[RMDB]
RNA sequence: GGGAACGACUCGAGUAGAGUCGAAAAAUUCAAAACAAAUGAGAGGACAGGGGGAGGAGAGAAGGAACAAGCGCAGAUCAGGUAGCUCCUUCUUGGGAUCUGAUAGACAGGGAAGGUUUCCUUUCCAGCAGUACCAUGGGUUCGCCCAUGGUACUGCAAAAGAAACAACAACAACAAC
Reactivity to 2A3 in 0.01 (KOAc 150mM, MgCl2 10mM, bicine 150mM(pH8.5), 24C), signal-to-noise 1, nucleotides 027 to 126: a000u270u180c130a000a000a000a100c110a170a150a120u230g000a000g110a020g000g120a050c080a000g020g000g000g000g000a000g000g000a000g050a000g000a020a000g000g000a000a220c140a250a000g000c010g020c000a050g000a100u120c010a050g040g090u190a050g040c000u000c110c060u140u000c040u030u090g000g000g000a060u010c020u040g000a020u170a070g090a060c170a020g000g000g120a000a000g000g010u040u050u290c000c000u000u050u000c050c000a070